[RMDB]
RNA sequence: GGGAACGACUCGAGUAGAGUCGAAAAGGCGUAGGCCUGCGCGGCCUUGCGGAGCGAGGUGUGGGUCAGGGCGAAGGUGUCCCUGACCAUGACCUUGAGGUACUGGUGUUUGAAGUCGGAGUCGUCGCAGCCGCCCCGCUCCCAGAGCGAGAAGUCGGGACUGUAGGAAAUUCGUUUCCUACAGUCCAAAAGAAACAACAACAACAAC
Reactivity to 2A3 in 0.01 (KOAc 150mM, MgCl2 10mM, bicine 150mM(pH8.5), 24C), signal-to-noise 1, nucleotides 027 to 156: g040g000c030g060u120a000g020g030c000c050u060g020c020g040c060g020g050c040c020u080u050g070c060g000g020a030g030c010g020a030g020g000u060g030u110g010g120g150u010c000a000g000g010g000c070g060a150a160g190g100u220g050u180c040c010c000u020g000a040c020c050a030u060g050a050c000c000u080u010g040a030g010g030u080a130c030u090g070g020u120g080u030u140u280g090a030a000g040u080c050g000g000a030g040u010c000g020u040c020g000c050a010g000c030c060g000c000c030c000c000g000c020u030c000c020c010a090g030a040g090c060g000a090g080a130a050g020u150c080g000
Source: RMDB library OK3TST, as collected in RNAgym. The record gives the reactivity of an RNA of 207 nucleotides to 2A3. The reactions ran in a buffer of 150 mM KOAc, 10 mM MgCl2 and 150 mM bicine (pH 8.5), at 24 C. The 2A3 profile rests on 606 reads.